[RMDB]
RNA sequence: GGGAACGACUCGAGUAGAGUCGAAAAAGGUGGUCCCAAGAGCUGCCGCAAGUGUAAGAAGGGCUGGAGCAUGGACUCGGAGGCAGGAUGUGUCGACAUUAAUGAGUGCUUGGAGCAACAGCGUCCAUGACUACGGAAUGUUCGCAUUCCGUAGUCAAAAAGAAACAACAACAACAAC
Reactivity to 2A3 in 0.01 (KOAc 150mM, MgCl2 10mM, bicine 150mM(pH8.5), 24C), signal-to-noise 2, nucleotides 027 to 126: a000g100g010u090g050g060u030c080c030c020a020a020g070a000g000c040u060g050c020c000g020c020a070a100g070u070g020u180a080a030g020a030a080g040g050g040c000u040g040g020a010g000c030a070u090g060g000a010c010u010c040g000g030a060g030g000c040a020g080g030a050u070g020u000g040u110c020g030a030c030a030u000u120a170a080u180g020a020g040u060g110c030u030u020g110g000a000g040c010a060a070c020a120g080c000g090u030c000c040a060
Reactivity to DMS in 0.01 (KOAc 150mM, MgCl2 10mM, bicine 150mM(pH8.5), 24C), signal-to-noise 3, nucleotides 027 to 126: a080g010g010u010g020g000u020c000c020c070a160a150g000a150g010c070u000g030c030c040g010c150a070a040g000u010g020u000a070a050g000a120a120g010g000g040c020u000g000g000a080g000c050a060u010g000g010a080c070u020c050g010g000a150g000g020c020a060g000g020a090u010g020u010g020u000c100g000a060c100a090u000u020a080a040u000g000a110g010u000g000c040u000u010g010g010a090g000c060a060a090c110a110g010c030g010u000c000c050a110

The record gives the reactivity of an RNA of 177 nucleotides to 2A3 and DMS. The reactions ran in a buffer of 150 mM KOAc, 10 mM MgCl2 and 150 mM bicine (pH 8.5), at 24 C. For 2A3 the reverse transcriptase was SuperScript II with manganese. The data come from the RNA Mapping Database (RMDB), library OK2TRN.